Chemical mapping of a 177-nucleotide RNA with DMS and 2A3. Source: RMDB library TTRDEL, as collected in RNAgym. 2A3 is a SHAPE reagent: it acylates the 2'-hydroxyl of flexible nucleotides of all four kinds. The 2A3 profile rests on 3,133 reads. 2A3 adducts were read by reverse transcription with SuperScript II with manganese.

[RMDB]
RNA sequence: GGGAACGACUCGAGUAGAGUCGAAAAGAUAUGGACGUGACCCAGUGAAAUAAGGCGUUGAAAUCGGAAACGAUGGAGCCUUUGAGUAACUGCACGUCCUAAGUCAAAAGCUGCCUUCGGGCAGCAAGGAGUCCUAUAUGUUCGCAUAUAGGACUCCAAAAGAAACAACAACAACAAC
Reactivity to DMS in 0.01 (KOAc 150mM, MgCl2 10mM, bicine 150mM(pH8.5), 24C), signal-to-noise 2, nucleotides 027 to 126: g010a060u010a300u010g010g000a020c000g000u000g010a260c190c300c140a040g000u010g030a120a100a160u010a000a000g000g000c010g000u020u000g000a100a160a030u000c010g000g000a160a090a140c030g000a020u000g000g000a110g000c000c000u000u000u000g010a050g000u010a070a010c000u000g030c000a010c020g010u010c000c000u000a030a030g000u010c000a140a110a100a140g010c020u000g000c000c000u000u020c240g020g000g000c010a000g010c040a030a040
Reactivity to 2A3 in 0.01 (KOAc 150mM, MgCl2 10mM, bicine 150mM(pH8.5), 24C), signal-to-noise 1, nucleotides 027 to 126: g030a010u070a060u140g040g010a000c000g010u000g060a100c040c070c000a010g010u010g030a000a010a030u060a020a000g000g000c080g210u300u040g020a070a010a000u000c010g030g050a090a040a020c020g010a020u010g020g030a000g000c000c010u000u010u010g000a000g000u010a020a010c000u000g040c000a000c000g020u000c000c000u030a070a010g020u000c010a060a040a110a100g000c010u040g000c020c030u040u130c220g140g030g000c040a040g020c000a010a010